[RMDB]
RNA sequence: GGGAACGACUCGAGUAGAGUCGAAAACAGACCAGAAACUGGUUGUUAAUGCACCACUGUGUGAGGGUUUCACCCUUGGUAUUUGGUGGGUUCGCGCGAUCCCAUGCCAACUCGCGUGUGCGUUAGCCUCCGCAGUAGCAUUCGUGCUACUGCGGAGAAAAGAAACAACAACAACAAC
Reactivity to 2A3 in 0.01 (KOAc 150mM, MgCl2 10mM, bicine 150mM(pH8.5), 24C), signal-to-noise 2, nucleotides 027 to 126: c020a010g040a010c000c000a020g090a070a300a090c150u030g010g020u000u050g050u030u020a040a020u050g020c020a010c060c000a020c090u110g010u000g080u090g070a060g070g040g000u070u200u300c130a100c000c000c020u010u050g080g010u110a120u110u160u080g070g010u030g060g000g000u020u060c050g010c030g000c070g080a020u000c000c000c040a010u120g030c010c020a050a060c040u000c020g050c010g010u050g010u020g010c010g010u010u000a020g030c000
Reactivity to DMS in 0.01 (KOAc 150mM, MgCl2 10mM, bicine 150mM(pH8.5), 24C), signal-to-noise 2, nucleotides 027 to 126: c110a140g010a020c010c000a040g020a100a190a130c080u000g000g000u000u010g010u010u000a030a060u020g000c010a070c030c020a040c040u000g030u000g000u000g000a010g010g000g020u000u020u000c290a140c000c010c020u000u010g010g010u010a050u000u010u010g020g020u000g020g010g020u000u010c070g000c130g040c030g010a020u000c040c010c010a140u010g000c090c090a060a090c140u000c020g000c030g000u000g020u000g020c040g030u000u000a060g000c050

Chemical mapping of a 177-nucleotide RNA with 2A3 and DMS. The 2A3 profile rests on 2,026 reads. Reactivities are given for positions 27 through 126. Source: RMDB library OK2TST, as collected in RNAgym. For DMS the reverse transcriptase was MarathonRT.